[RMDB]
Description: Source: RMDB library OK3TST, as collected in RNAgym. Structure probing data (2A3) for a 207-nucleotide construct. The reactions ran in a buffer of 150 mM KOAc, 10 mM MgCl2 and 150 mM bicine (pH 8.5), at 24 C. For 2A3, 723 sequencing reads were counted.

RNA sequence: GGGAACGACUCGAGUAGAGUCGAAAAGAAGACGAUCUGCCUGAAGAUGGCAUGCGAGUUGGAAGAGAUGGUGGGGCGCUGGAAGACGUUGAAGCUGGCGUCCUGCAGGCCGACGGCGUCGCGCACGAAGGAGGCGUAGGACUCGCGCAGCUUGUGCAGCACAUGAGAAGUUCGCUUCUCAUGUGCUAAAAGAAACAACAACAACAAC
Reactivity to 2A3 in 0.01 (KOAc 150mM, MgCl2 10mM, bicine 150mM(pH8.5), 24C), signal-to-noise 1, nucleotides 027 to 156: g060a040a000g040a000c010g040a040u020c000u070g000c000c010u010g070a140a070g040a070u040g060g000c010a000u060g030c050g000a090g050u040u040g100g040a060a040g020a030g060a120u180g030g050u000g000g020g010g040c040g000c030u020g020g110a020a010g060a010c130g030u120u070g050a010a020g060c000u020g000g000c020g000u000c020c000u000g000c010a000g090g000c010c000g000a040c030g000g040c000g030u010c010g040c040g000c000a040c060g060a020a040g050g000a050g020g000c000g000u000a020g000g070a050c030u000c040g000c000g000c000a030g000c000u060u020g020u010g040c000